[RMDB]
RNA sequence: GGGAACGACUCGAGUAGAGUCGAAAACAACAGAGUAAGACCCUGCGCGUUAAGUGCCGCAUCAACGGGGAGUUGUGCUGCGGACGAAGGUAUUAGCCGCGGUGCAGGGUCUGCAUCCCGCUGCUGACAGCUGUACAGAUUUCGAUCUGUACAGCUGAAAAGAAACAACAACAACAAC
Reactivity to 2A3 in 0.01 (KOAc 150mM, MgCl2 10mM, bicine 150mM(pH8.5), 24C), signal-to-noise 7, nucleotides 027 to 126: c050a010a020c020a020g060a010g060u100a110a000g010a010c010c000c000u000g000c000g000c000g000u010u080a060a020g020u060g100c000c000g000c000a040u090c030a050a010c020g030g050g040g060a070g020u110u180g020u070g030c060u010g010c000g000g000a000c010g010a020a020g040g010u080a190u290u210a220g040c000c000g000c000g020g020u020g000c000a000g000g010g000u000c000u000g000c000a030u010c010c000c010g010c050u070g000c020u040g040a040
Reactivity to DMS in 0.01 (KOAc 150mM, MgCl2 10mM, bicine 150mM(pH8.5), 24C), signal-to-noise 4, nucleotides 027 to 126: c090a070a130c070a040g000a080g000u000a070a020g010a030c020c010c000u010g010c000g010c020g000u000u040a040a050g020u020g010c000c000g000c000a010u010c020a020a030c040g020g010g000g020a180g000u010u000g000u010g000c140u000g020c000g010g000a060c120g010a050a040g010g000u010a140u030u020a170g000c000c000g000c050g000g020u010g010c010a020g000g000g000u000c000u000g010c090a120u000c030c010c010g010c030u000g000c050u000g000a300
Annotation:
The record gives the reactivity of an RNA of 177 nucleotides to 2A3 and DMS.